[RMDB]
RNA sequence: GGGAACGACUCGAGUAGAGUCGAAAAACGGCACGGACGAGAUCGCGCGGCUGAGCCUCUCCUUCAACAGCAUGACCGGCGCGCUCGCCGCGUCCCGCGAGCGGCAGUGGCGGCUGAUCGCCGACGCGGGGCACGAGCUGCGCACGCCGCUGACGAGUCUCAUAGGAGAUUUCGAUCUCCUAUGAGAAAAAGAAACAACAACAACAAC
Reactivity to 2A3 in 0.01 (KOAc 150mM, MgCl2 10mM, bicine 150mM(pH8.5), 24C), signal-to-noise 1, nucleotides 027 to 156: a000c020g030g000c020a010c060g010g050a020c010g000a100g060a210u070c020g000c020g000c040g110g040c040u070g000a030g010c040c010u020c010u020c030c000u120u130c030a120a140c020a040g030c010a030u170g040a210c000c000g070g020c000g010c000g000c050u020c050g020c020c020g040c010g010u030c010c020c000g000c000g010a050g020c000g020g000c020a040g010u060g070g110c070g090g020c050u030g070a180u130c030g000c000c030g060a030c020g020c000g000g000g000g040c030a000c010g010a000g000c060u090g000c000g030c040a030c050g000c000c010g000c040u020g030a010c070g000a010g050